[RMDB]
RNA sequence: GGGAACGACUCGAGUAGAGUCGAAAACGUGGAAACUAUGAUGAAACUCCUAGAAGUGGGCGUGCCUGGCAGAAGGAGUAGGUCGAAAACUGGUUGCUGAAGCAGCAUAAGCUCCCUGAUGUAAGCUUUUGUAUUCGCUUUUCGAAGCGAAUACAAAAAAAGAAACAACAACAACAAC
Reactivity to 2A3 in 0.01 (KOAc 150mM, MgCl2 10mM, bicine 150mM(pH8.5), 24C), signal-to-noise 2, nucleotides 027 to 126: c050g000u110g070g070a070a010a000c090u130a120u290g020a000u030g010a100a040a040c040u000c040c030u040a040g060a100a030g180u100g000g040g000c030g010u040g000c000c000u020g030g000c030a070g030a070a020g120g000a040g030u060a060g000g050u020c000g040a010a000a060a090c060u050g030g020u050u010g000c000u000g000a050a010g030c030a000g000c010a010u000a100a000g010c020u030c000c020c000u010g080a100u090g100u090a020a090g030c020u020
Reactivity to DMS in 0.01 (KOAc 150mM, MgCl2 10mM, bicine 150mM(pH8.5), 24C), signal-to-noise 2, nucleotides 027 to 126: c020g020u010g010g010a080a090a050c220u000a110u010g020a040u010g000a150a080a100c040u030c000c020u000a020g000a230a130g000u000g010g000g000c070g000u020g000c010c020u000g020g020c060a040g000a160a040g000g000a100g000u000a090g010g000u000c020g020a020a080a010a130c090u010g020g010u000u020g000c030u030g000a030a090g020c050a010g030c020a000u010a090a150g000c050u000c000c000c030u010g010a050u020g010u000a160a050g000c040u030